[RMDB]
RNA sequence: GGGAACGACUCGAGUAGAGUCGAAAAAAGUGAUUAUUCGUAAUCACUUCACGCGGGGCGCGGUGGCGCGUGCCUGUAGUCCCAGCUACUCGGGAGGCUAAACGACGUACCCGUUCGCGGGUACGAAGGUUUGUUAUAAAUUCGUUUAUAACAAACCAAAAGAAACAACAACAACAAC
Reactivity to DMS in 0.01 (KOAc 150mM, MgCl2 10mM, bicine 150mM(pH8.5), 24C), signal-to-noise 4, nucleotides 027 to 126: a020a000g010u000g010a010u000u000a020u000u010c170g020u000a010a000u000c000a010c010u000u000c080a090c130g000c030g010g000g010g010c020g020c020g010g010u010g010g010c030g010c030g010u000g000c020c010u010g010u000a060g000u000c010c010c010a110g000c050u000a050c070u000c040g000g000g000a120g000g010c060u000a050a100a090c110g020a210c010g020u000a010c000c000c000g020u000u010c170g010c000g000g000g010u000a000c010g010a030a050
Reactivity to 2A3 in 0.01 (KOAc 150mM, MgCl2 10mM, bicine 150mM(pH8.5), 24C), signal-to-noise 3, nucleotides 027 to 126: a000a000g010u010g000a020u010u020a020u030u140c150g020u070a020a000u000c000a010c000u000u030c080a080c070g010c030g000g020g000g000c020g000c020g010g080u060g100g010c030g010c010g010u050g210c000c010u030g020u050a040g030u000c000c000c000a010g010c030u090a070c020u030c050g050g010g010a040g040g020c050u090a120a060a040c050g090a010c010g010u000a010c000c030c000g010u020u020c240g010c010g030g010g000u000a000c000g010a000a010
Structure probing data (DMS and 2A3) for a 177-nucleotide construct.
The RNA was probed in 150 mM KOAc, 10 mM MgCl2 and 150 mM bicine (pH 8.5) at 24 C.